About this RNA: This 207-nucleotide RNA was probed chemically with 2A3 and DMS. The reactions ran in a buffer of 150 mM KOAc, 10 mM MgCl2 and 150 mM bicine (pH 8.5), at 24 C. The data come from the RNA Mapping Database (RMDB), library ARCHII.
RNA sequence: GGGAACGACUCGAGUAGAGUCGAAAACUAGCAGGCCGAAUUCCUUCUUGAGGUUAGCUCAUCUUAGGGCCUGCCUUAAGUAAGUGGUGUUGACGUUUGGGUCCUACGCAAUGGGAAUCUGUGAACCCUGUCAGGUCCGGAAGGAAGCAGCAGUAAGGUACACUGUUUUGUUCGCAAAACAGUGUACAAAAGAAACAACAACAACAAC
Reactivity to 2A3 in 0.01 (KOAc 150mM, MgCl2 10mM, bicine 150mM(pH8.5), 24C), signal-to-noise 1, nucleotides 027 to 156: c050u010a020g000c010a000g040g030c000c010g130a060a060u080u010c010c000u040u000c020u020u080g010a000g010g040u160u130a000g000c020u020c040a110u030c090u140u150a090g020g000g020c000c010u000g040c000c000u060u010a050a020g010u040a040a090g020u050g110g030u160g100u200u160g020a020c050g030u070u110u040g080g010g000u060c000c050u040a050c050g050c060a050a080u080g040g040g010a040a060u030c070u040g060u030g100a040a060c010c000c010u000g080u040c040a010g050g010u010c010c040g040g030a010a010g030g000a020a010g000c000a000g010c000a010g020u060a080a000g080
Reactivity to DMS in 0.01 (KOAc 150mM, MgCl2 10mM, bicine 150mM(pH8.5), 24C), signal-to-noise 2, nucleotides 027 to 156: c010u010a050g010c030a050g040g070c000c010g000a160a160u000u000c020c000u000u000c000u000u010g000a040g000g020u010u000a090g010c010u000c010a100u020c130u020u000a150g030g020g000c020c020u000g000c020c010u000u000a020a130g000u000a050a080g030u010g000g000u000g020u000u010g000a040c070g030u010u010u000g010g000g000u000c020c010u010a080c070g020c070a070a090u000g060g040g010a130a100u000c090u000g000u010g010a090a120c040c010c030u000g000u000c050a070g000g040u000c010c010g000g030a110a030g010g010a090a060g020c060a070g030c000a090g030u010a050a090g020